An RNA of 207 nucleotides, treated with DMS and 2A3 and read out base by base. For DMS the reverse transcriptase was MarathonRT. For DMS, 12,029 sequencing reads were counted. It was measured as part of the RMDB library OK3TST. Values cover nucleotides 27 to 156.
RNA sequence: GGGAACGACUCGAGUAGAGUCGAAAAUCGCGAGUUCCGUAUGAAGCAUCGGCACCGGCUCUCUGGCGUGCUCUACAUGGUUACCAGUUCUACCUUUGUGCGGUGACUGGAUGCGGACACUGCAGUCAUCGGAAGUUUACGACAACCUCCUUGUGCAACGUAUUAGUAUGUUCGCAUACUAAUACGUAAAAGAAACAACAACAACAAC
Reactivity to DMS in 0.01 (KOAc 150mM, MgCl2 10mM, bicine 150mM(pH8.5), 24C), signal-to-noise 3, nucleotides 027 to 156: u000c030g010c010g010a110g030u000u030c020c010g020u000a080u020g010a130a130g000c030a060u000c050g010g000c020a100c040c060g020g000c040u010c140u000c030u010g010g030c040g040u000g000c020u010c040u010a090c080a090u000g020g010u000u020a120c020c010a070g020u000u010c040u000a050c030c040u010u000u000g020u000g020c030g020g030u000g010a070c020u000g030g010a080u010g010c000g000g010a110c050a130c060u000g000c020a040g000u000c020a110u000c040g000g000a040a050g010u000u000u000a100c110g000a090c040a040a080c030c020u000c010c010u000u010g010u020g000c020a200
Reactivity to 2A3 in 0.01 (KOAc 150mM, MgCl2 10mM, bicine 150mM(pH8.5), 24C), signal-to-noise 9, nucleotides 027 to 156: u110c030g000c040g030a030g060u060u010c010c010g010u080a060u130g100a100a020g010c030a040u080c070g070g000c030a020c020c030g110g020c020u020c020u000c030u060g040g010c040g070u050g020c030u030c020u060a080c040a100u160g080g000u110u110a070c030c020a020g020u080u060c060u100a090c020c010u120u150u150g080u090g070c030g000g030u010g080a170c010u010g040g030a010u050g020c000g020g000a030c040a010c080u130g000c030a010g030u040c010a030u050c010g020g030a040a030g040u060u110u130a130c130g030a030c020a030a060c010c010u040c000c020u070u120g050u060g060c040a050